[RMDB]
RNA sequence: GGGAACGACUCGAGUAGAGUCGAAAAGGAACUCUGAGACUGAGACAGAACAUACUUUAUGCUGGGGCUUGCAACGUUGGGUGCUUUUCUACUGGUAACCUUCCCAGAAUAAAAUCCACUGAGGUCCCUUUACGACCCGAUUCGUCGGGUCGUAAAGAAAAGAAACAACAACAACAAC
Reactivity to DMS in 0.01 (KOAc 150mM, MgCl2 10mM, bicine 150mM(pH8.5), 24C), signal-to-noise 1, nucleotides 027 to 126: g020g030a080a150c060u000c010u010g010a170g010a130c060u020g020a090g000a070c090a060g000a100a120c140a070u010a100c110u000u000u000a060u020g010c060u010g000g000g000g000c130u030u020g010c050a070a050c170g000u010u000g010g010g010u000g000c010u000u040u060u000c060u010a090c190u010g010g010u000a060a050c120c040u000u020c060c010c000a100g010a020a070u020a030a030a100a090u000c070c060a050c100u000g010a070g000g020u000c100c040
Chemical mapping of a 177-nucleotide RNA with DMS. The data come from the RNA Mapping Database (RMDB), library OK2TRN. The RNA was probed in 150 mM KOAc, 10 mM MgCl2 and 150 mM bicine (pH 8.5) at 24 C. DMS adducts were read by reverse transcription with MarathonRT. For DMS, 702 sequencing reads were counted.